[RMDB]
RNA sequence: GGGAACGACUCGAGUAGAGUCGAAAAGAGUAGUCAGUAAUUAAGUCUAGUCGCAUGAGAAUGUGACUAGAGUGACGUCAUGACUACGGUAUGGGUCGUCACGACUUAGUUACACUCGGAUCCAUACGGUAGUCUAUCAUUUCGAUGGUAGGCUACCAAAAGAAACAACAACAACAAC
Reactivity to 2A3 in 0.01 (KOAc 150mM, MgCl2 10mM, bicine 150mM(pH8.5), 24C), signal-to-noise 9, nucleotides 027 to 126: g020a010g010u110a020g080u100c150a010g010u020a020a020u030u010a020a000g040u000c000u000a000g000u000c000g000c010a000u010g030a020g050a180a020u000g000u010g000a000c000u000a000g000a000g010u000g000a000c010g020u030c010a030u070g170a030c010u020a020c120g010g000u020a010u020g020g010g030u110c000g000u010c010a000c030g030a010c010u010u020a000g010u010u020a010c020a010c010u000c000g010g020a020u000c000c000a020u040a060c050
Reactivity to DMS in 0.01 (KOAc 150mM, MgCl2 10mM, bicine 150mM(pH8.5), 24C), signal-to-noise 9, nucleotides 027 to 126: g000a050g010u010a040g010u020c100a120g010u010a030a010u010u000a030a020g000u000c000u000a000g010u000c000g010c000a000u000g000a240g010a170a010u000g010u000g000a010c000u000a000g000a070g010u000g000a040c110g010u020c040a060u010g000a020c010u000a060c090g030g010u010a030u010g000g000g010u010c010g000u010c040a050c030g010a090c030u010u000a030g010u010u010a030c040a090c050u000c020g000g010a070u010c000c000a060u030a070c160